Structure probing data (DMS) for a 177-nucleotide construct. The RNA was probed in 150 mM KOAc, 10 mM MgCl2 and 150 mM bicine (pH 8.5) at 24 C. DMS adducts were read by reverse transcription with MarathonRT. Reactivities are rounded to 0.1 and cut off at 0 and 3.

RNA sequence: GGGAACGACUCGAGUAGAGUCGAAAAGGAAACCUGGAGGAAGUCGAGGUCGGGGGGGAACAGCUGCUUCGGUCGCCGCGGAUCACUGGCGUCCAGCGGAGAAACAGGAGCUCGUCUCCUUCCUUUCACACUAUGUUACCUUCGGGUAACAUAGUGUAAAAGAAACAACAACAACAAC
Reactivity to DMS in 0.01 (KOAc 150mM, MgCl2 10mM, bicine 150mM(pH8.5), 24C), signal-to-noise 1, nucleotides 027 to 126: g010g020a120a040a110c060c030u000g050g010a070g000g020a070a030g050u000c060g020a080g010g000u030c070g020g010g020g000g010g000g060a030a030c200a100g020c060u020g010c030u010u010c130g010g020u000c040g020c010c010g070c050g010g010a080u000c080a150c160u000g010g010c030g030u010c000c020a080g000c030g010g020a050g010a040a080a050c110a030g030g020a020g000c030u000c140g030u000c030u010c010c030u000u000c070c020u000u000u000c020